[RMDB]
RNA sequence: GGGAACGACUCGAGUAGAGUCGAAAAGUCUCACGAGUGCACAGACAAAGGUAGUUGACUCCGGCGCUACCAGUACUCGAAUGAAUGCGAAAGAGUUCAUGUAUUCCAACCGGAGAAGAACUCAAAAGGUAAAUCGGUAGUUCGCUACCGAUUUACCAAAAGAAACAACAACAACAAC
Reactivity to DMS in 0.01 (KOAc 150mM, MgCl2 10mM, bicine 150mM(pH8.5), 24C), signal-to-noise 2, nucleotides 027 to 126: g000u000c000u000c000a300c020g040a010g000u000g070c000a120c300a050g000a110c300a100a270a130g000g020u000a000g040u030u010g010a040c000u000c000c000g000g000c200g000c020u030a000c000c000a080g040u000a020c000u000c020g000a130a040u070g000a040a080u000g010c090g010a120a080a150g000a030g000u000u000c030a200u000g000u040a040u040u010c130c130a270a080c060c020g000g000a020g000a290a000g000a000a000c000u000c000a010a000a040a050
Reactivity to 2A3 in 0.01 (KOAc 150mM, MgCl2 10mM, bicine 150mM(pH8.5), 24C), signal-to-noise 3, nucleotides 027 to 126: g080u000c000u010c000a000c020g010a000g030u030g000c050a120c110a090g160a090c160a120a070a110g040g000u000a000g010u050u300g040a020c000u000c000c000g050g000c010g000c010u030a030c000c000a000g000u010a010c000u010c010g030a000a050u170g090a070a080u170g080c080g060a090a110a140g000a020g020u010u000c060a110u200g100u300a180u220u210c090c010a050a040c010c000g000g040a000g030a030a010g000a000a000c000u000c000a010a020a020a020
The record gives the reactivity of an RNA of 177 nucleotides to DMS and 2A3. The RNA was probed in 150 mM KOAc, 10 mM MgCl2 and 150 mM bicine (pH 8.5) at 24 C.